[RMDB]
RNA sequence: GGGAACGACUCGAGUAGAGUCGAAAAGCCAUGGGAUGCUCCUCCCGAUUCCGUCCAUCCCCACCCCCUGAGGGUCGCCCAGGAAUGGCGGGACCCCACUCGACAGGGUCCGCGUACCAUCCUUUCUCUUAAUAGAAUCCUUCGGGAUUCUAUUAAGAAAAGAAACAACAACAACAAC
Reactivity to DMS in 0.01 (KOAc 150mM, MgCl2 10mM, bicine 150mM(pH8.5), 24C), signal-to-noise 1, nucleotides 027 to 126: g040c050c040a080u000g010g000g010a100u000g000c050u020c030c040u000c030c020c000g010a210u000u020c040c000g010u000c050c010a120u030c030c000c010c060a300c060c000c000c020c030u010g000a150g010g020g020u000c020g000c030c000c020a050g000g000a050a050u000g010g020c020g000g020g010a020c000c000c000c040a120c150u010c130g000a080c190a180g000g000g000u000c000c010g020c060g030u000a110c010c010a020u000c070c000u000u000u020c070u000